[RMDB]
RNA sequence: GGGAACGACUCGAGUAGAGUCGAAAACUCCCGUUGUUGAGUAUCUGUCUAAAGAAGACCUACAUACAUUGUAUGUAGACCCUAAGUAUCAAGUCAUUGUCUUAAAAGACAAUGUACUUUCUUCUAUAAUCACAGAAUAGUUCGCUAUUCUGUGAUUAAAAGAAACAACAACAACAAC
Reactivity to DMS in 0.01 (KOAc 150mM, MgCl2 10mM, bicine 150mM(pH8.5), 24C), signal-to-noise 2, nucleotides 027 to 126: c190u000c000c000c030g020u000u010g000u000u010g010a160g000u000a090u000c140u000g000u000c030u000a100a140a080g000a060a080g010a060c230c000u000a000c000a010u000a000c010a110u000u000g010u010a020u010g000u000a000g010a160c030c070c080u010a040a140g020u010a060u010c180a030a010g010u000c000a010u000u000g000u000c000u000u010a110a130a090a090g000a010c000a010a000u000g010u030a010c000u000u000u000c050u000u000c030u000a210u000
Overview: The data come from the RNA Mapping Database (RMDB), library 15KREP. Chemical mapping of a 177-nucleotide RNA with DMS. DMS adducts were read by reverse transcription with MarathonRT. High DMS reactivity at an A or C suggests that its Watson-Crick edge is free. For DMS, 1,192 sequencing reads were counted.